Structure probing data (DMS and 2A3) for a 207-nucleotide construct. It was measured as part of the RMDB library M2RFPK. DMS adducts were read by reverse transcription with MarathonRT. The reactions ran in a buffer of 150 mM KOAc, 10 mM MgCl2 and 150 mM bicine (pH 8.5), at 24 C. Reactivities are given for positions 27 through 156.
[RMDB]
RNA sequence: GGGAACGACUCGAGUAGAGUCGAAAACAUGGGGAACUACAUCUGUGUCGCGAGUUCGAUUGUCGCCAGGGCCUGGUCCUGUAGCUCAGUUGGUAGAGCAAGCUGUUCCCCGGACACUUGUCGUCAUAAAAGUUGCCCCCGUUCGCGGGGGCAACAAGUUCCAUCAUAUGUUCGCAUAUGAUGGAACAAAAGAAACAACAACAACAAC
Reactivity to DMS in 0.01 (KOAc 150mM, MgCl2 10mM, bicine 150mM(pH8.5), 24C), signal-to-noise 1, nucleotides 027 to 156: c030a160u000g040g020g030g000a050a050c030u000a030c050a130u000c060u130g030u010g010u000c060g020c030g000a150g040u030u010c030g000a110u000u000g010u000c050g020c070c020a150g010g030g030c100c150u000g100g020u000c020c020u010g020u000a080g040c030u000c020a070g010u010u000g000g040u000a170g030a180g050c020a050a040g020c080u010g010u000u000c000c000c000c070g000g020a120c050a040c140u000u020g000u000c010g010u000c030a050u010a060a060a040a230g000u000u000g000c000c000c000c000c010g030u010u000c230g000c110g030g000g070g070g050c010a000a000c010a000a080
Reactivity to 2A3 in 0.01 (KOAc 150mM, MgCl2 10mM, bicine 150mM(pH8.5), 24C), signal-to-noise 1, nucleotides 027 to 156: c060a050u110g000g000g010g040a020a010c040u060a040c050a100u120c080u050g100u020g080u250c030g000c010g020a030g030u080u130c060g070a110u020u180g030u050c030g010c010c010a010g030g020g020c000c160u050g040g030u030c000c010u010g000u030a010g000c000u030c000a090g020u110u100g080g030u120a040g010a010g050c000a020a010g020c080u020g020u030u020c000c000c000c000g000g000a020c020a040c030u070u070g040u130c040g060u070c080a020u160a130a120a000a010g000u010u010g030c030c020c000c020c000g000u000u020c050g030c000g040g010g000g000g000c000a000a000c000a040a000